About this RNA: Structure probing data (DMS and 2A3) for a 177-nucleotide construct. The RNA was probed in 150 mM KOAc, 10 mM MgCl2 and 150 mM bicine (pH 8.5) at 24 C.

[RMDB]
RNA sequence: GGGAACGACUCGAGUAGAGUCGAAAACCGGAUCUCGGCGCCGGUGUUGGUGAAGGUGACCCUGCCGUCGCCGAUGACGUAGCUCAGCCGGCGGUUGACCCGGUAGGUCCCGCCGGGGGUGUGCACCGAGAAGCGAACAGUUCGCUGUUCGCUUCUCAAAAGAAACAACAACAACAAC
Reactivity to DMS in 0.01 (KOAc 150mM, MgCl2 10mM, bicine 150mM(pH8.5), 24C), signal-to-noise 1, nucleotides 027 to 126: c040c060g010g000a170u020c090u000c000g030g000c020g000c080c050g050g010u040g050u010u110g000g010u000g000a140a050g020g060u000g000a110c180c000c090u020g020c000c000g000u000c000g000c000c020g020a000u010g060a060c000g090u000a090g010c000u000c050a220g090c000c050g030g060c010g020g060u000u030g000a000c020c010c090g010g070u000a170g010g020u020c000c000c070g020c000c020g030g000g020g000g080u070g090u000g000c110a160c290c130
Reactivity to 2A3 in 0.01 (KOAc 150mM, MgCl2 10mM, bicine 150mM(pH8.5), 24C), signal-to-noise 3, nucleotides 027 to 126: c000c020g020g050a200u040c020u000c040g000g010c000g020c010c000g010g000u030g070u110u130g010g010u110g130a250a090g080g150u220g100a170c000c010c010u030g000c010c000g000u000c000g020c010c000g000a020u050g010a000c000g060u130a040g010c000u020c020a090g030c000c000g000g000c000g020g000u080u290g000a000c000c000c010g090g070u170a140g030g010u000c020c000c000g000c000c010g000g000g000g000g000u050g010u050g020c020a030c070c030